[RMDB]
RNA sequence: GGGAACGACUCGAGUAGAGUCGAAAAGAACACACUCGUAUGUCGAACACAGUUGUGAAUAACAUAUCAACCAAUCUGACUUGCCGAAUGACUAAUAUAACGGCACUCAAACGCGAAGAUAGUGAGACAUGAGUGUUGCACACGUCCAUCGCUUCCGCGCCUCGUUCCCCUUCGGGGGAACGAGGCGAAAAGAAACAACAACAACAAC
Reactivity to 2A3 in 0.01 (KOAc 150mM, MgCl2 10mM, bicine 150mM(pH8.5), 24C), signal-to-noise 1, nucleotides 027 to 156: g080a060a010c010a000c000a000c020u000c060g090u300a090u020g010u000c000g030a020a000c080a000c080a090g080u010u000g070u190g130a230a040u220a130a010c050a060u150a000u040c000a000a040c080c000a000a180u070c100u050g010a010c060u020u100g000c000c000g100a090a070u190g090a180c160u150a050a250u210a040u030a140a060c040g000g070c000a040c020u010c130a100a040a070c010g150c090g120a050a060g000a080u070a030g050u070g010a010g000a020c050a000u020g000a000g000u000g000u040u220g060c060a060c000a000c120g180u120c010c000a020u070c060g040c150u070u000c010c040g000